Chemical mapping of a 177-nucleotide RNA with DMS and 2A3.
The reactions ran in a buffer of 150 mM KOAc, 10 mM MgCl2 and 150 mM bicine (pH 8.5), at 24 C.
It was measured as part of the RMDB library RFM100.
For DMS the reverse transcriptase was MarathonRT.
RNA sequence: GGGAACGACUCGAGUAGAGUCGAAAAUUGCCUGCAAAGAAUUCCGGUUUGCCGGUUUUCCCGGCGUCCAGUUUUGGGUAUGAGAGCGCAUCCCGAAAAGUGUGAAACGGUUUUCGGAUAAGAUGCGGAUACGAUCGCGUUUCGACGCGAUCGUAUCAAAAGAAACAACAACAACAAC
Reactivity to DMS in 0.01 (KOAc 150mM, MgCl2 10mM, bicine 150mM(pH8.5), 24C), signal-to-noise 1, nucleotides 027 to 126: u060u010g000c030c010u010g010c050a000a020a270g010a060a120u000u000c120c140g000g030u000u010u010g010c030c020g010g050u000u000u010u010c120c000c000g020g010c060g050u020c010c060a060g000u000u000u000u000g000g030g040u000a080u080g000a040g000a100g030c030g020c000a010u000c000c000c000g000a010a010a000a020g000u020g010u020g040a130a150a280c060g000g020u000u020u000u000c020g000g000a170u010a120a190g000a020u000g000c020g000
Reactivity to 2A3 in 0.01 (KOAc 150mM, MgCl2 10mM, bicine 150mM(pH8.5), 24C), signal-to-noise 2, nucleotides 027 to 126: u120u040g050c000c010u020g010c050a020a020a000g070a030a060u130u130c000c030g100g000u100u080u130g040c000c000g000g000u030u020u110u110c000c000c000g010g070c020g020u020c000c030a030g010u010u040u100u110g020g000g030u080a070u130g080a060g000a010g050c000g000c000a000u000c030c000c000g010a000a000a000a070g300u020g030u120g100a150a070a020c040g000g000u000u000u000u000c000g010g000a000u020a090a070g000a020u000g000c000g020